[RMDB]
The record gives the reactivity of an RNA of 177 nucleotides to 2A3 and DMS. The reactions ran in a buffer of 150 mM KOAc, 10 mM MgCl2 and 150 mM bicine (pH 8.5), at 24 C. 2A3 adducts were read by reverse transcription with SuperScript II with manganese. For DMS the reverse transcriptase was MarathonRT.
RNA sequence: GGGAACGACUCGAGUAGAGUCGAAAAGAUAUGGACCUUCGACAUGCAACCAUAACGAAUAAGGCGCUUCGGAAACGAAGCGAACUACCUUAUUCGUUAUAAUUUGCAACAGCGAAGGUCCUAAGUCGAUUAAUGAGAUGUUCGCAUCUCAUUAAUCAAAAGAAACAACAACAACAAC
Reactivity to 2A3 in 0.01 (KOAc 150mM, MgCl2 10mM, bicine 150mM(pH8.5), 24C), signal-to-noise 3, nucleotides 027 to 126: g060a050u160a110u200g000g000a000c000c010u010u000c030g150a190c060a140u100g000c010a010a020c040c050a020u000a000a010c000g000a000a000u020a010a010g000g010c030g000c010u010u010c000g020g010a030a090a090c010g000a000a000g000c020g000a010a000c010u040a000c010c000u010u000a000u000u000c000g000u000u010a000u000a000a000u020u020u030g000c010a080a060c040a160g100c000g010a000a010g020g000u010c000c010u000a010a000g010u000c080
Reactivity to DMS in 0.01 (KOAc 150mM, MgCl2 10mM, bicine 150mM(pH8.5), 24C), signal-to-noise 6, nucleotides 027 to 126: g020a070u010a300u010g010g020a010c010c000u000u000c000g010a110c140a220u010g000c010a030a030c300c210a030u000a000a000c000g000a030a000u000a000a010g000g000c000g010c010u010u010c000g010g000a130a070a200c010g010a010a000g010c010g000a030a010c070u020a300c010c000u000u000a010u000u000c000g000u000u000a000u000a090a170u010u000u000g000c000a030a070c250a130g000c020g010a020a000g000g000u000c000c000u000a010a080g000u000c130
Reactivities are given for positions 27 through 126.